[RMDB]
RNA sequence: GGGAACGACUCGAGUAGAGUCGAAAAGAUAUGGAUCUGGCUACCCACCGCUACCUCCGACGAUCAUAUUCUGCUCGGAAACGAGCAGAAUAUGGGAGGAGAAGUAGCGAGGCCAGAUCCUAAGUCACAAUGACACUAGGUUCGCCUAGUGUCAUUGAAAAGAAACAACAACAACAAC
Reactivity to 2A3 in 0.01 (KOAc 150mM, MgCl2 10mM, bicine 150mM(pH8.5), 24C), signal-to-noise 2, nucleotides 027 to 126: g140a060u300a240u300g020g020a000u040c000u020g000g020c000u160a300c040c040c010a010c000c030g000c030u000a010c000c010u010c030c010g290a300c030g000a140u030c020a000u020a010u000u000c000u000g000c000u010c020g010g020a080a090a050c010g000a010g000c000a000g000a000a000u000a010u000g000g000g000a010g100g000a010g040a170a080g020u020a000g010c000g020a000g020g000c000c000a000g000a000u000c000c000u000a020a010g070u060c040a000
Reactivity to DMS in 0.01 (KOAc 150mM, MgCl2 10mM, bicine 150mM(pH8.5), 24C), signal-to-noise 3, nucleotides 027 to 126: g030a120u010a260u000g020g000a000u000c000u000g000g000c000u000a140c040c010c030a300c110c000g010c010u010a030c000c000u000c000c000g000a100c280g000a050u000c010a010u000a010u000u000c000u000g000c000u010c000g000g000a080a130a140c000g040a010g020c000a000g000a000a000u000a000u020g000g000g000a060g010g000a000g000a090a110g040u000a010g010c000g000a050g000g000c000c000a000g000a000u000c000c000u000a010a080g000u000c200a230